Structure probing data (DMS and 2A3) for a 207-nucleotide construct. Conditions: 150 mM KOAc, 10 mM MgCl2 and 150 mM bicine (pH 8.5), 24 C. The data come from the RNA Mapping Database (RMDB), library M2RFPK. For DMS the reverse transcriptase was MarathonRT. The DMS profile rests on 2,719 reads.
RNA sequence: GGGAACGACUCGAGUAGAGUCGAAAAAGACCACCUCUACGGAGGUGGUCAAGUCACGUAGCUAGUACCAGGUUGCAAUACUAGAGCGUUCGUCCUGGGGCGUACGGUGGCAGUACGCUGCCACCGAUAAAACUUGAAUACUUCGGUAUUCAAGUAACUUACAAUAAAGCUUCGGCUUUAUUGUAAGAAAAGAAACAACAACAACAAC
Reactivity to DMS in 0.01 (KOAc 150mM, MgCl2 10mM, bicine 150mM(pH8.5), 24C), signal-to-noise 1, nucleotides 027 to 156: a130g000a020c000c000a040c000c000u010c010u000a150c270g030g000a020g070g050u010g010g000u000c010a000a000g010u000c110a030c020g050u000a070g000c020u000a000g000u000a050c030c010a080g000g000u010u000g000c050a130a050u000a010c020u000a010g000a300g000c000g020u000u000c080g010u000c010c030u000g010g010g020g030c110g020u000a040c030g000g000u000g010g040c020a050g070u010a100c250g020c000u010g000c010c000a020c000c000g000a050u000a020a130a070a070c000u000u000g010a020a030u000a000c000u000u000c250g030g000u010a000u000u010c000a000a010g000u000a020a050
Reactivity to 2A3 in 0.01 (KOAc 150mM, MgCl2 10mM, bicine 150mM(pH8.5), 24C), signal-to-noise 2, nucleotides 027 to 156: a000g010a010c000c000a000c000c000u020c010u030a090c300g100g000a010g000g020u000g030g000u000c000a010a000g000u030c010a000c030g040u050a020g050c010u010a020g000u060a080c030c040a080g030g070u150u100g030c050a020a050u010a070c030u040a020g010a020g030c010g040u100u120c010g040u060c000c000u020g000g010g060g040c130g080u150a010c030g010g000u010g000g000c000a000g000u020a000c290g000c100u000g000c000c000a000c000c000g010a010u030a010a080a010a010c000u000u000g000a000a000u000a000c000u020u060c120g100g000u000a000u000u000c000a000a000g000u000a000a040